[RMDB]
An RNA of 177 nucleotides, treated with 2A3 and DMS and read out base by base.
RNA sequence: GGGAACGACUCGAGUAGAGUCGAAAAAGGCGCUGCAGGCGGUAUCUGCCCGACAGCGUCACGCCAACUCGGGGGCUCAUGGUUCCCCCUGCAGUGCGGCUUCGAUCACCGCCCGCCCGAUCGGUGCCGCCCACCCUAGAUUCGUCUAGGGUGGGCGAAAAGAAACAACAACAACAAC
Reactivity to 2A3 in 0.01 (KOAc 150mM, MgCl2 10mM, bicine 150mM(pH8.5), 24C), signal-to-noise 3, nucleotides 027 to 126: a000g020g000c000g000c020u010g000c000a020g020g020c040g090g060u240a150u180c090u140g030c000c000c000g030a050c000a010g000c000g020u010c020a000c030g030c000c000a050a040c030u060c040g010g000g000g060g020c030u030c170a150u250g150g000u060u210c020c000c010c000c000u030g000c080a040g010u050g100c040g000g000c000u070u050c060g050a060u030c010a010c070c020g010c020c050c010g040c000c060c020g000a000u030c000g000g010u020g030c000
Reactivity to DMS in 0.01 (KOAc 150mM, MgCl2 10mM, bicine 150mM(pH8.5), 24C), signal-to-noise 1, nucleotides 027 to 126: a190g000g020c000g050c000u000g010c000a240g000g010c140g010g030u080a090u030c030u020g000c000c000c000g000a280c020a060g050c010g120u000c010a020c010g010c020c030a110a070c120u010c010g000g040g000g000g000c180u020c210a200u050g070g000u000u000c020c020c000c000c000u040g000c090a090g010u000g020c070g000g000c080u000u110c060g000a090u000c020a080c110c040g070c020c000c070g040c020c010c000g000a150u020c000g000g000u000g010c190
For DMS, 1,180 sequencing reads were counted.
For 2A3, 1,694 sequencing reads were counted.
For 2A3 the reverse transcriptase was SuperScript II with manganese.